RNA sequence: GGGAACGACUCGAGUAGAGUCGAAAAGAUAUGGACAACCUCAAAGCCUAGUCUACGGGAGCAAAGAUUUCGGAAACGAAAUCGUUGCUUUGAUCGUAGACUAGGCUUUGAGGGUUGUCCUAAGUCACUAUGAAUGUUAGUUCGCUAACAUUCAUAGAAAAGAAACAACAACAACAAC
Reactivity to DMS in 0.01 (KOAc 150mM, MgCl2 10mM, bicine 150mM(pH8.5), 24C), signal-to-noise 5, nucleotides 027 to 126: g020a060u000a300u010g000g000a010c010a000a040c010c010u000c000a000a010a010g010c000c000u000a010g010u000c000u000a000c000g000g010g000a010g020c000a010a070a050g000a010u000u000u000c000g010g010a110a110a290c010g010a010a010a010u000c000g000u000u000g010c000u000u000u010g010a100u020c000g010u000a020g000a000c000u000a000g000g000c000u000u000u000g000a010g010g000g010u000u000g010u000c000c000u000a010a070g020u010c040a290